Structure probing data (DMS) for a 177-nucleotide construct.
The reactions ran in a buffer of 150 mM KOAc, 10 mM MgCl2 and 150 mM bicine (pH 8.5), at 24 C.
It was measured as part of the RMDB library TTRDEL.
For DMS, 915 sequencing reads were counted.
For DMS the reverse transcriptase was MarathonRT.
RNA sequence: GGGAACGACUCGAGUAGAGUCGAAAAGAUAUGGACCUGGGGUAGGGAGGGCAAUCGGAAACGAUUGCCGAGGAUCUAUUCUUUGUAGGUCCUAAGUCAAACUACUACAAGUUCGCUUGUAGUAGAACAUGACUUUGUCGUUCGCGACAAAGUCAUGAAAAGAAACAACAACAACAAC
Reactivity to DMS in 0.01 (KOAc 150mM, MgCl2 10mM, bicine 150mM(pH8.5), 24C), signal-to-noise 1, nucleotides 027 to 126: g000a040u010a300u010g040g040a020c000c010u000g000g000g000g000u000a020g010g000g030a210g000g030g000c000a000a000u000c000g010g010a070a080a190c040g000a030u000u030g020c000c020g000a020g010g010a230u020c000u000a000u000u000c050u030u030u010g060u010a030g020g000u000c000c000u010a020a080g000u010c050a100a180a170c000u000a000c000u000a000c020a030a010g020u000u030c280g060c000u000u000g030u000a010g030u000a000g000a050a160